Structure probing data (2A3) for a 207-nucleotide construct.
RNA sequence: GGGAACGACUCGAGUAGAGUCGAAAACGGACCGGCUCAUCUCGACAAGAGGCGGCGAACCUCAGUACUCUUACUCUUUUCUGUAAAGAGGAGACUGCUGGUCCUGCCGCCCAAGUUCGAGCAUGAGCCAAUUCCGAGCGAAGGGAGCGCGGGAGGAUCGACACUCAUUGUUCGCAAUGAGUGUCGAAAAAGAAACAACAACAACAAC
Reactivity to 2A3 in 0.01 (KOAc 150mM, MgCl2 10mM, bicine 150mM(pH8.5), 24C), signal-to-noise 2, nucleotides 027 to 156: c000g020g040a030c000c080g010g010c010u000c000a030u000c020u010c000g000a020c060a140a170g090a140g040g010c000g000g000c000g020a020a000c000c000u000c000a040g010u190a300c070u020c080u070u140a300c010u010c000u070u200u200u130c210u290g250u300a050a000a000g000a010g030g000a000g010a010c000u000g010c060u010g020g000u000c000c000u030g000c000c000g030c000c000c000a090a020g000u110u050c000g000a000g000c000a000u000g040a000g000c000c000a000a010u000u000c000c000g030a000g060c120g120a010a050g020g000g000a130g010c030g000c140g000g010g030a060g080g020a200